[RMDB]
RNA sequence: GGGAACGACUCGAGUAGAGUCGAAAAGGCAUUCGCUUCGGCGAAUGCCAAAGAGUGCACGGCAGCACUAGACGUGCCGACGUCAAGAAAAGCCGUAAUAAAAAAGCCUGAACUUCGGUUCAGGCAACUUUAUGUUAGACUUCGGUCUAACAUAAAGAAAAGAAACAACAACAACAAC
Reactivity to DMS in 0.01 (KOAc 150mM, MgCl2 10mM, bicine 150mM(pH8.5), 24C), signal-to-noise 3, nucleotides 027 to 126: g010g030c010a000u000u000c000g000c000u000u010c140g030g020c000g010a020a000u010g000c000c000a020a020a050g000a040g010u000g000c030a050c010g010g010c010a110g020c000a040c020u000a110g020a020c000g010u000g010c120c060g000a050c010g010u000c010a090a070g010a030a020a110a300g000c000c000g010u010a150a090u020a010a060a140a130a120a140g010c000c000u000g000a000a000c000u010u020c160g020g010u000u000c000a000g000g010c000a000a000
Reactivity to 2A3 in 0.01 (KOAc 150mM, MgCl2 10mM, bicine 150mM(pH8.5), 24C), signal-to-noise 3, nucleotides 027 to 126: g010g010c000a010u010u030c020g030c120u120u130c250g040g000c000g010a000a000u000g020c000c010a000a000a000g000a000g000u040g000c040a000c070g010g000c000a040g030c000a060c000u040a120g000a000c010g010u060g080c040c020g080a060c010g000u020c020a040a030g020a050a070a010a000g010c010c020g030u030a020a160u140a150a240a020a030a020a010g010c010c000u000g000a010a010c010u020u060c280g090g000u000u020c000a000g000g010c000a000a000